RNA sequence: GGGAACGACUCGAGUAGAGUCGAAAAGUUCUGCCGGGAUACCGACGGAAUUUCAGACAAGCCAAAGGGUAAUAGCUUUGGUUGACCUACACCGAAAAGGAAAUAGGUGUCGUUGGUUGAGUGAGAAUCCCAUUACAAUCUUCGGAUUGUAAUGGGAAAAAGAAACAACAACAACAAC
Reactivity to 2A3 in 0.01 (KOAc 150mM, MgCl2 10mM, bicine 150mM(pH8.5), 24C), signal-to-noise 1, nucleotides 027 to 126: g020u000u000c020u000g030c000c000g000g030g070a130u120a290c000c000g020a000c000g000g000a000a000u000u010u100c020a060g000a030c030a060a040g000c000c000a000a000a000g030g000g000u010a020a010u030a090g070c000u000u000u000g000g010u070u050g000a000c020c000u000a020c000a000c010c020g120a000a000a000a180g280g080a110a030a010u180a050g000g020u010g000u020c100g010u010u020g060g050u000u010g010a010g110u020g030a020g120a100a040
Reactivity to DMS in 0.01 (KOAc 150mM, MgCl2 10mM, bicine 150mM(pH8.5), 24C), signal-to-noise 4, nucleotides 027 to 126: g020u000u020c000u000g000c020c040g000g020g010a210u040a070c000c010g000a020c010g020g020a000a010u000u000u000c050a180g000a080c180a110a070g000c000c000a000a010a000g010g000g000u010a130a060u040a300g000c000u000u000u000g000g000u000u000g010a130c050c000u000a040c080a250c020c000g010a080a080a080a100g030g020a050a110a130u010a070g000g000u000g010u000c060g010u000u010g000g000u000u000g020a220g000u000g000a110g000a230a140
The data come from the RNA Mapping Database (RMDB), libraries RFM100 and RFMREP. This 177-nucleotide RNA was probed chemically with 2A3 and DMS. The RNA was probed in 150 mM KOAc, 10 mM MgCl2 and 150 mM bicine (pH 8.5) at 24 C. Values cover nucleotides 27 to 126.